The record gives the reactivity of an RNA of 177 nucleotides to 2A3 and DMS.
RNA sequence: GGGAACGACUCGAGUAGAGUCGAAAAUACCCCAUAAUGACCUGAGAGGUAUGAGGCGAUACCCGUAUUGAUUGUUGAGCGAAGCCGGCUUGCCGGUGGAGUGAUGCUUUCAGAGUGGCUAGUGCACCUCAAGGAUUAUUUUCGAAUAAUCCUUGAGAAAAGAAACAACAACAACAAC
Reactivity to 2A3 in 0.01 (KOAc 150mM, MgCl2 10mM, bicine 150mM(pH8.5), 24C), signal-to-noise 9, nucleotides 027 to 126: u100a030c020c000c010c010a040u200a170a120u190g090a050c010c020u080g070a080g020a050g140g030u050a050u080g080a070g040g070c030g020a020u050a070c010c000c020g070u120a100u100u100g050a050u010u020g020u010u020g020a000g010c010g010a010a000g000c000c000g010g000c050u070u160g070c000c000g000g000u020g010g000a010g000u030g000a010u020g000c000u000u020u010c020a020g030a030g070u100g030g010c030u050a030g040u020g110c030a040c020
Reactivity to DMS in 0.01 (KOAc 150mM, MgCl2 10mM, bicine 150mM(pH8.5), 24C), signal-to-noise 9, nucleotides 027 to 126: u030a120c070c000c000c080a080u040a070a070u020g010a060c030c020u000g010a100g000a090g010g020u000a030u010g010a090g010g010c040g000a100u020a100c040c010c020g010u030a100u020u000g010a040u000u000g000u000u000g000a300g000c010g010a300a220g000c000c010g000g000c020u020u010g010c000c010g000g010u000g000g010a300g010u000g000a120u000g000c020u000u000u000c020a040g010a100g010u010g010g010c040u000a080g010u020g010c050a090c140

2A3 adducts were read by reverse transcription with SuperScript II with manganese.